[RMDB]
RNA sequence: GGGAACGACUCGAGUAGAGUCGAAAACAACUUACCUAAGCUUGACAUCCCAAUGACAUCUCCUUAAUCGGAGAGUUCCCUUCGGGGACAUUGGUGACAGGUGGUGCAUGGUUGUCGUCAGCUCGUGAAAUUUAAUCCUCUUCGGAGGAUUAAAUUUAAAAGAAACAACAACAACAAC
Reactivity to DMS in 0.01 (KOAc 150mM, MgCl2 10mM, bicine 150mM(pH8.5), 24C), signal-to-noise 5, nucleotides 027 to 126: c050a060a070c080u000u020a110c200c020u020a120a160g000c020u000u010g010a130c150a160u010c090c000c010a030a010u020g000a210c230a120u010c000u000c000c000u000u010a160a090u040c240g000g000a020g020a020g000u010u000c000c000c000u010u030c180g010g020g000g000a030c000a020u000u000g000g010u030g020a060c120a050g000g030u010g010g020u010g030c120a100u010g000g000u000u000g010u000c040g010u010c070a060g010c040u010c060g010u030g000
Reactivity to 2A3 in 0.01 (KOAc 150mM, MgCl2 10mM, bicine 150mM(pH8.5), 24C), signal-to-noise 4, nucleotides 027 to 126: c010a010a010c020u110u180a070c020c030u070a050a040g030c010u000u050g040a040c020a090u050c020c000c000a000a040u020g020a020c010a180u000c000u000c010c010u050u130a070a050u150c030g000g010a000g000a010g010u010u050c000c000c000u020u070c260g030g000g010g010a000c000a000u020u050g000g010u060g020a000c020a010g030g000u010g000g030u060g020c070a050u150g060g000u010u060g010u010c040g100u050c040a020g020c040u020c040g050u070g060
This 177-nucleotide RNA was probed chemically with DMS and 2A3. For 2A3 the reverse transcriptase was SuperScript II with manganese. The DMS profile rests on 9,719 reads. The reactions ran in a buffer of 150 mM KOAc, 10 mM MgCl2 and 150 mM bicine (pH 8.5), at 24 C.